Record summary:
Chemical mapping of a 177-nucleotide RNA with DMS and 2A3. The data come from the RNA Mapping Database (RMDB), library M2PK90. For 2A3, 861 sequencing reads were counted. Reactivities are rounded to 0.1 and cut off at 0 and 3.
RNA sequence: GGGAACGACUCGAGUAGAGUCGAAAAUAAAAUCAAAUUAAGAGAGGUAAUGUCUGAGAAUAGAAUGGAUUGGAAUUUGUCCUAUUGGCACUGGUUAACCGUAAUUACCACCACCAAAAUAAAAAAACAAUAGCGUAAGGUUCGCCUUACGCUAUUGAAAAGAAACAACAACAACAAC
Reactivity to DMS in 0.01 (KOAc 150mM, MgCl2 10mM, bicine 150mM(pH8.5), 24C), signal-to-noise 2, nucleotides 027 to 126: u010a100a070a090a040u010c020a040a060a100u000u000a100a110g000a050g000a060g000g010u000a010a060u010g010u000c030u000g010a140g010a050a100u010a060g000a090a070u000g000g030a060u000u000g000g020a080a100u000u000u000g010u000c010c030u000a150u010u000g000g000c050a070c160u010g000g020u000u000a070a090c090c080g000u010a060a050u000u010a040c020c060a090c190c070a090c060c040a010a040a030a100u050a020a020a030a080a060a030a100
Reactivity to 2A3 in 0.01 (KOAc 150mM, MgCl2 10mM, bicine 150mM(pH8.5), 24C), signal-to-noise 1, nucleotides 027 to 126: u030a040a000a000a010u030c010a030a030a120u110u160a220a020g030a010g010a030g000g000u020a080a030u050g010u030c030u090g040a020g000a060a160u080a100g030a070a040u080g030g010a050u050u090g090g050a050a000u020u000u140g030u050c000c000u020a090u080u020g000g060c020a000c030u000g000g070u030u040a030a040c030c000g010u000a000a030u040u020a000c050c030a020c000c000a000c000c010a000a030a140a090u300a080a140a020a020a000a000a000